The record gives the reactivity of an RNA of 177 nucleotides to 2A3 and DMS. It was measured as part of the RMDB library OK1LIB. The reactions ran in a buffer of 150 mM KOAc, 10 mM MgCl2 and 150 mM bicine (pH 8.5), at 24 C.
[RMDB]
RNA sequence: GGGAACGACUCGAGUAGAGUCGAAAACUGAAGAACAACGUCAACAAUUUGAAGCAGAAGGACGCCAACCAUCAAUUCGUUUCCGAGUACCUCAAAACCAAACGUAUUCAUUUGAUGAUAUGGUAAACGUACAGAAAAGGUUCGCCUUUUCUGUACGAAAAGAAACAACAACAACAAC
Reactivity to 2A3 in 0.01 (KOAc 150mM, MgCl2 10mM, bicine 150mM(pH8.5), 24C), signal-to-noise 9, nucleotides 027 to 126: c030u040g060a060a010g050a090a030c040a050a030c080g080u040c070a050a050c060a120a160u100u120u200g110a150a030g020c090a050g020a120a020g100g010a010c040g000c020c000a020a030c010c010a020u070c020a020a100u100u070c030g020u030u020u000c040c020g030a030g050u050a060c020c020u100c060a040a060a050a080c020c040a070a030a060c070g040u060a060u100u120c060a060u080u090u110g090a100u020g010a010u020a060u180g030g010u050a050a100a010
Reactivity to DMS in 0.01 (KOAc 150mM, MgCl2 10mM, bicine 150mM(pH8.5), 24C), signal-to-noise 4, nucleotides 027 to 126: c010u000g010a070a040g000a090a070c080a120a110c040g010u000c040a070a110c150a070a060u020u030u020g010a070a030g010c070a110g000a120a120g000g000a060c080g020c010c030a050a040c060c040a000u020c030a030a050u000u010c040g010u000u000u000c030c020g000a100g010u010a070c020c080u040c140a050a050a060a070c100c080a010a050a060c160g000u010a020u020u010c050a080u000u000u030g010a030u000g000a070u010a030u000g000g010u020a070a030a160

For 2A3, 9,960 sequencing reads were counted.